[RMDB]
RNA sequence: GGGAACGACUCGAGUAGAGUCGAAAAAACACGCGGACGAGUAUUCGCGUUAUAUCGUAGACGGGGCGGCGGUUGCUGAAAUGAAAGGAAUCAUUGAACGCCAUCAGGCCAAAUGAUUUUUACCGUUUUAGGUCUAUUUUUUCGAAAAUAGACCUAAAAAAGAAACAACAACAACAAC
Reactivity to DMS in 0.01 (KOAc 150mM, MgCl2 10mM, bicine 150mM(pH8.5), 24C), signal-to-noise 5, nucleotides 027 to 126: a050a050c190a030c000g010c010g000g000a020c110g010a180g030u070a160u010u010c010g000c010g010u000u030a020u000a090u020c110g010u020a070g000a100c050g020g000g010g030c060g020g000c060g020g010u000u000g000c050u010g000a060a080a050u010g010a040a070a090g000g020a030a040u000c000a010u000u000g000a100a090c260g000c010c000a100u050c230a100g000g000c010c050a100a020a020u000g000a010u000u000u000u000u010a120c100c030g000u030u000
Reactivity to 2A3 in 0.01 (KOAc 150mM, MgCl2 10mM, bicine 150mM(pH8.5), 24C), signal-to-noise 5, nucleotides 027 to 126: a000a000c040a010c000g010c000g000g000a030c060g050a060g110u150a150u070u010c010g000c010g000u040u020a090u000a010u100c060g020u050a040g030a060c060g000g000g020g010c010g010g000c010g000g030u030u070g000c030u030g060a070a070a130u120g060a090a040a000g050g020a010a020u000c000a010u000u040g020a110a040c070g000c000c010a060u170c140a090g010g000c010c030a000a050a050u030g020a040u000u000u040u080u100a080c030c040g000u000u000
An RNA of 177 nucleotides, treated with DMS and 2A3 and read out base by base. The reactions ran in a buffer of 150 mM KOAc, 10 mM MgCl2 and 150 mM bicine (pH 8.5), at 24 C. Values are in units of 0.01, from 0 to 300, in steps of 10. Values cover nucleotides 27 to 126.